Structure probing data (2A3 and DMS) for a 207-nucleotide construct. 2A3 adducts were read by reverse transcription with SuperScript II with manganese. The data come from the RNA Mapping Database (RMDB), library OK3TST.

RNA sequence: GGGAACGACUCGAGUAGAGUCGAAAAUUGCGUCGAGUUAUGAUGCGAGACCUUGAAUGUGGAGCUUCAGUAUCUAUUGCAAAUAAAGUUUGGCCAGGUUUAAUUCCUGAACAACCUCAAAUGCUUGCAAGUUCUUAUGAUGAAAAAGGCAUUAAUACGAAUAUAGGUUAUUCGUAACCUAUAUUCGAAAAGAAACAACAACAACAAC
Reactivity to 2A3 in 0.01 (KOAc 150mM, MgCl2 10mM, bicine 150mM(pH8.5), 24C), signal-to-noise 7, nucleotides 027 to 156: u060u050g020c010g020u010c020g010a050g130u180u110a150u280g020a030u040g010c020g010a030g030a030c020c020u050u090g110a110a050u140g020u090g030g020a030g020c010u050u030c040a050g030u080a060u050c040u040a090u090u090g010c020a040a040a030u090a070a200a010g010u000u030u030g020g020c070c000a000g010g010u020u030u020a040a050u110u060c000c000u000g010a020a020c010a010a010c000c010u050c040a090a090a070u070g020c010u010u040g000c030a050a020g010u030u010c010u040u120a110u100g080a030u050g050a050a040a050a050a020g030g000c020a010u050u140a100a060u150a110
Reactivity to DMS in 0.01 (KOAc 150mM, MgCl2 10mM, bicine 150mM(pH8.5), 24C), signal-to-noise 5, nucleotides 027 to 156: u010u000g000c010g030u000c030g010a300g030u000u000a110u010g020a080u010g020c020g010a110g010a100c040c030u010u000g010a070a130u010g020u010g020g000a110g000c050u010u000c040a110g010u000a040u010c030u000a120u000u000g030c020a030a060a120u000a090a070a050g010u000u000u000g010g010c030c000a020g030g010u010u010u000a110a300u020u000c010c010u000g000a020a020c010a010a040c030c010u000c040a060a150a140u000g020c070u000u000g010c030a030a080g010u000u000c020u000u000a060u000g010a080u000g000a050a070a080a090a110g010g010c010a070u000u000a030a140u010a180
Source information: The RNA was probed in 150 mM KOAc, 10 mM MgCl2 and 150 mM bicine (pH 8.5) at 24 C.